This 177-nucleotide RNA was probed chemically with DMS and 2A3.
Reactivities are given for positions 27 through 126.
Conditions: 150 mM KOAc, 10 mM MgCl2 and 150 mM bicine (pH 8.5), 24 C.
It was measured as part of the RMDB library OK2TST.

[RMDB]
RNA sequence: GGGAACGACUCGAGUAGAGUCGAAAAAUACCAGGCUUCGACGGUGUGACAAUGACCGAUCUCGAACAGCUUCGCAUAGGCCCGCCGGAUCGGCUCGUUGAUCCAUGUGCGUGCGCGUUCGCCGGUAGCACUCCUCCCAUUUCGAUGGGAGGAGUGCAAAAGAAACAACAACAACAAC
Reactivity to DMS in 0.01 (KOAc 150mM, MgCl2 10mM, bicine 150mM(pH8.5), 24C), signal-to-noise 1, nucleotides 027 to 126: a140u000a110c020c030a090g010g000c050u000u000c010g010a000c010g000g030u030g000u000g020a110c080a060a080u000g000a080c020c000g010a060u010c030u000c000g040a090a300c250a140g000c000u000u010c070g040c180a100u000a110g010g030c000c030c020g020c300c050g050g010a030u010c050g000g000c180u010c020g000u040u000g010a150u000c020c010a070u000g040u010g000c070g020u000g000c140g010c080g010u010u000c090g000c080c000g040g020u000a080
Reactivity to 2A3 in 0.01 (KOAc 150mM, MgCl2 10mM, bicine 150mM(pH8.5), 24C), signal-to-noise 1, nucleotides 027 to 126: a000u070a030c010c010a110g000g000c000u070u040c040g020a020c010g010g060u010g090u160g070a010c020a050a060u020g000a020c000c000g030a030u000c150u120c030g030a070a050c000a020g010c010u170u130c100g020c140a100u060a270g030g000c000c000c120g000c030c020g000g000a000u020c010g080g000c160u040c000g000u000u090g020a170u020c020c000a070u070g000u050g060c060g020u070g030c090g010c030g050u040u020c020g010c050c020g020g040u020a040